[RMDB]
RNA sequence: GGGAACGACUCGAGUAGAGUCGAAAAAGUUAUGGUCCCACCACCAAUCCAAGAAUGAAAAAAUACAGGAAGACCAGUAUAUCCAGUCACUUUCAUAUGCACACCAUCGGUAAUCUUCAGAUGAGUAGUCUCAAGCUUCAGGACUUUCAGCUCCGGACCUCCGUUACAAGUUCGCUUGUAACGGAGGAAAAGAAACAACAACAACAAC
Reactivity to 2A3 in 0.01 (KOAc 150mM, MgCl2 10mM, bicine 150mM(pH8.5), 24C), signal-to-noise 1, nucleotides 027 to 156: a000g100u130u080a110u200g080g000u010c040c000c000a000c050c000a010c000c020a000a120u160c050c050a090a060g050a080a190u130g090a050a130a040a030a040a040u100a020c030a040g030g070a100a030g000a070c000c050a010g050u050a110u010a000u130c010c030a000g040u020c010a020c100u020u040u110c070a060u140a050u100g040c000a050c000a000c050c000a070u020c020g000g000u080a110a150u030c130u100u160c040a040g000a100u010g030a040g120u060a030g050u000c010u020c110a080a000g030c000u110u070c070a030g000g030a010c000u040u060u000c160a050g020c080u000c030c000g010g010a020
An RNA of 207 nucleotides, treated with 2A3 and read out base by base. The 2A3 profile rests on 518 reads. The data come from the RNA Mapping Database (RMDB), library OK3TST.